Notes
Source: RMDB library OK3TST, as collected in RNAgym. Chemical mapping of a 207-nucleotide RNA with 2A3 and DMS. The RNA was probed in 150 mM KOAc, 10 mM MgCl2 and 150 mM bicine (pH 8.5) at 24 C. 2A3 adducts were read by reverse transcription with SuperScript II with manganese.
RNA sequence: GGGAACGACUCGAGUAGAGUCGAAAAGGAGGAAGGAUGUCGAAACCGAGAGGUCCUGAGGAAUCGCUUUUUAGAGUUUGACUAACAGAUUGUGUUAGUAUAUAGAUGCCGCCUAUAUAACUCUUCAGAAACCUCAGGCGACAGUGAGGCGGCAUGACGAUCUAGAAUAAUUCGUUAUUCUAGAUCGAAAAGAAACAACAACAACAAC
Reactivity to 2A3 in 0.01 (KOAc 150mM, MgCl2 10mM, bicine 150mM(pH8.5), 24C), signal-to-noise 4, nucleotides 027 to 156: g040g010a010g020g020a050a020g020g030a040u040g000u080c030g060a110a060a070c030c020g000a030g010a020g060g020u050c000c000u000g000a010g010g010a010a040u050c030g020c080u150u080u030u050u100a010g000a010g010u010u060u120g070a010c010u000a010a010c020a130g160a300u200u220g080u010g000u080u000a000g010u000a020u000a000u000a030g040a020u010g000c000c000g000c000c000u020a020u000a000u000a040a010c000u000c000u070u070c040a050g030a010a030a010c000c000u000c000a000g000g000c010g010a000c000a010g050u040g050a010g000g010c000g000g000c000a000u000g010a000
Reactivity to DMS in 0.01 (KOAc 150mM, MgCl2 10mM, bicine 150mM(pH8.5), 24C), signal-to-noise 4, nucleotides 027 to 156: g000g000a080g010g020a060a060g010g020a060u010g020u000c020g010a090a070a130c040c020g000a160g010a130g000g010u000c020c010u000g010a040g010g000a030a230u000c020g000c180u010u000u010u000u000a050g010a030g020u000u000u010g010a120c000u000a010a020c000a120g010a220u000u000g020u000g010u000u000a030g020u000a080u000a050u000a060g000a100u000g020c010c010g010c030c000u010a120u000a060u000a030a050c010u000c000u000u000c100a120g000a060a040a190c020c010u000c020a030g010g010c070g010a050c050a070g010u000g000a070g000g000c020g020g020c010a000u000g000a130